Chemical mapping of a 177-nucleotide RNA with 2A3. The RNA was probed in 150 mM KOAc, 10 mM MgCl2 and 150 mM bicine (pH 8.5) at 24 C.
RNA sequence: GGGAACGACUCGAGUAGAGUCGAAAAUACUUCCAGUACAACUUUAUGGGGGAGACUCACGCCUCAACACACUGCGCAGUAUCGCAUAUUUUGUCCCCUCUUGCUGUCUUGGUGACAACUAAAUAUGGAGCUGGGGUGAUUUCGAUCACCCCAGCUCAAAAGAAACAACAACAACAAC
Reactivity to 2A3 in 0.01 (KOAc 150mM, MgCl2 10mM, bicine 150mM(pH8.5), 24C), signal-to-noise 1, nucleotides 027 to 126: u060a030c000u060u000c000c000a000g000u130a100c050a150a230c050u300u170u140a240u210g050g000g000g050g080a210g050a000c000u000c290a050c080g130c000c000u030c050a020a000c000a000c000a030c130u080g000c030g010c090a000g020u100a050u160c020g000c160a030u000a030u000u260u000u000g000u090c000c000c000c000u130c030u110u060g000c000u060g160u120c030u280u120g200g000u020g160a000c000a000a000c100u260a140a130a000u300a060u030g020